[RMDB]
RNA sequence: GGGAACGACUCGAGUAGAGUCGAAAAGAAGAGCAGGCAGAUAAUCUUGUGCAGUAUGCAUGCUCGUAUCUCCACAAGAAGCAAGGCAGCAAAAGAAUAACUGCCACUGCACAAGUGGAGCCGCAGAAAUCCUCCUGCGUUUCGACGCAGGAGGAUUAAAAGAAACAACAACAACAAC
Reactivity to DMS in 0.01 (KOAc 150mM, MgCl2 10mM, bicine 150mM(pH8.5), 24C), signal-to-noise 2, nucleotides 027 to 126: g010a060a130g000a020g000c020a020g010g050c000a020g000a160u040a150a080u020c020u000u040g020u000g010c000a050g000u000a020u000g000c020a000u020g000c030u010c030g000u030a110u030c000u000c030c110a130c090a000a180g020a300a110g000c030a080a220g000g010c000a000g020c180a280a040a050a170g000a110a140u030a160a300c030u000g000c010c010a070c070u000g010c010a020c030a060a060g000u000g000g000a060g000c000c000g000c110a090g000a080
Reactivity to 2A3 in 0.01 (KOAc 150mM, MgCl2 10mM, bicine 150mM(pH8.5), 24C), signal-to-noise 2, nucleotides 027 to 126: g140a080a010g000a000g040c000a060g020g000c010a000g040a100u150a040a110u100c010u050u030g000u030g000c000a050g000u000a050u170g010c020a020u000g000c000u000c000g060u000a150u040c060u000c000c000a070c000a030a100g080a200a000g000c090a090a040g040g030c000a070g010c080a020a000a110a100g240a160a010u260a190a010c000u000g000c000c000a000c020u000g000c020a020c000a000a000g000u000g060g000a020g000c030c030g070c000a010g140a040

An RNA of 177 nucleotides, treated with DMS and 2A3 and read out base by base. For DMS the reverse transcriptase was MarathonRT. For 2A3, 858 sequencing reads were counted.